[RMDB]
RNA sequence: GGGAACGACUCGAGUAGAGUCGAAAAUAAUAUGCAUAUCGAGUUCCCAUGUAUUUUCGUAGCCCUGCGGCUGUAACAUUACAGGUUAGUAAGAAUGCUACCUAACGAUAGCUAGCCGCAGGAUUAAGUACAUUAUCCACUUCGGUGGAUAAUGUACAAAAGAAACAACAACAACAAC
Reactivity to 2A3 in 0.01 (KOAc 150mM, MgCl2 10mM, bicine 150mM(pH8.5), 24C), signal-to-noise 3, nucleotides 027 to 126: u030a020a010u120a090u200g060c050a010u040a110u240c070g070a020g090u020u000c000c010c010a000u080g030u020a120u000u170u010u110c120g040u070a020g010c010c000c030u000g010c030g010g000c000u010g010u010a070a030c020a060u020u080a020c040a060g050g050u070u070a010g020u010a230a090g150a300a090u160g030c000u020a020c010c000u030a060a010c230g020a040u020a040g030c060u060a010g000c010c000g000c000a000g000g010a000u000u020a000a000
Reactivity to DMS in 0.01 (KOAc 150mM, MgCl2 10mM, bicine 150mM(pH8.5), 24C), signal-to-noise 3, nucleotides 027 to 126: u010a060a090u010a090u020g010c090a070u000a100u000c080g000a180g010u000u000c000c000c000a140u010g000u000a050u010u000u010u000c080g010u010a130g030c090c010c010u000g010c000g010g050c000u000g010u000a070a100c140a030u000u000a110c220a030g010g000u000u000a010g010u010a050a110g010a100a110u010g000c000u000a030c010c030u010a070a110c220g010a010u000a020g000c110u000a050g000c000c000g010c010a000g000g000a020u000u000a030a090

Structure probing data (2A3 and DMS) for a 177-nucleotide construct. Reactivities are given for positions 27 through 126. DMS adducts were read by reverse transcription with MarathonRT. The RNA was probed in 150 mM KOAc, 10 mM MgCl2 and 150 mM bicine (pH 8.5) at 24 C. For 2A3 the reverse transcriptase was SuperScript II with manganese. For 2A3, 2,162 sequencing reads were counted.